About this RNA
An RNA of 177 nucleotides, treated with 2A3 and DMS and read out base by base. The reactions ran in a buffer of 150 mM KOAc, 10 mM MgCl2 and 150 mM bicine (pH 8.5), at 24 C. Reactivities are given for positions 27 through 126.

RNA sequence: GGGAACGACUCGAGUAGAGUCGAAAACUAGUUCUGUAUGAGCAAAACAGUUUUCGCAAAAAUACCCUGAGUUUCUUACUACCCAUCUAGCACAAAUAUUGCUGAUGGUAAUUUCCGAAUUCAGACAACUCUGUGGAGAUUUCGAUCUCCACAGAGUAAAAGAAACAACAACAACAAC
Reactivity to 2A3 in 0.01 (KOAc 150mM, MgCl2 10mM, bicine 150mM(pH8.5), 24C), signal-to-noise 2, nucleotides 027 to 126: c020u090a180g000u000u000c010u040g080u090a190u230g240a150g050c000a010a010a010a010c000a010g030u020u000u030u050c090g000c030a000a120a000a000a000u070a070c020c000c010u030g020a050g000u010u030u000c000u080u050a090c010u030a010c000c000c010a000u000c130u220a020g000c020a040c090a050a250a170u210a150u250u170g010c010u000g000a000u000g070g000u020a010a030u010u110u000c080c010g070a050a150u050u060c000a100g100a200c060a070
Reactivity to DMS in 0.01 (KOAc 150mM, MgCl2 10mM, bicine 150mM(pH8.5), 24C), signal-to-noise 1, nucleotides 027 to 126: c000u000a060g000u000u000c000u000g010u030a250u060g000a130g000c000a000a000a000a080c000a000g000u000u000u000u000c000g070c150a060a080a240a050a090u110a030c090c040c030u000g010a140g040u000u000u000c010u020u020a060c140u000a120c220c010c030a080u000c000u080a000g030c000a050c290a040a070a090u160a030u050u000g000c000u000g010a000u000g000g000u040a020a170u000u040u010c210c120g000a000a150u000u000c170a070g000a110c300a080